[RMDB]
RNA sequence: GGGAACGACUCGAGUAGAGUCGAAAAACGCCAGGAUACGUCCUGGCGAACCGCGUACUUACCUACUGUAUGGUAGCUAAGAUGCAUGUAUUUCGCCUAUUAUAUAGCGGGUAAGUACGCGGUUUAACCUACGUGAUACUUUCGAGUAUCACGUAGGAAAAGAAACAACAACAACAAC
Reactivity to DMS in 0.01 (KOAc 150mM, MgCl2 10mM, bicine 150mM(pH8.5), 24C), signal-to-noise 4, nucleotides 027 to 126: a110c020g020c010c000a010g010g000a060u020a080c220g010u010c000c010u000g000g010c000g010a010a010c000c000g020c000g010u000a000c000u010u000a010c010c000u000a140c000u000g020u000a000u000g010g000u000a010g010c070u030a130a100g010a040u010g010c210a110u020g020u020a060u010u000u000c060g000c290c000u000a000u000u000a000u000a010u000a010g010c040g000g000g010u000a000a000g010u000a000c000g010c000g020g000u000u000u010a040a180
Reactivity to 2A3 in 0.01 (KOAc 150mM, MgCl2 10mM, bicine 150mM(pH8.5), 24C), signal-to-noise 9, nucleotides 027 to 126: a000c010g000c000c000a000g010g010a020u030a060c220g090u030c000c000u000g000g000c000g000a000a000c000c000g000c000g000u000a000c000u000u000a000c000c000u010a020c010u000g010u010a010u000g010g010u010a000g010c030u090a100a120g070a130u150g070c110a120u210g080u300a190u060u070u070c060g020c020c000u000a000u020u000a000u000a000u010a000g000c050g000g000g000u000a000a000g000u000a000c000g000c000g000g000u000u000u000a000a000
An RNA of 177 nucleotides, treated with DMS and 2A3 and read out base by base. Reactivities are rounded to 0.1 and cut off at 0 and 3. The RNA was probed in 150 mM KOAc, 10 mM MgCl2 and 150 mM bicine (pH 8.5) at 24 C.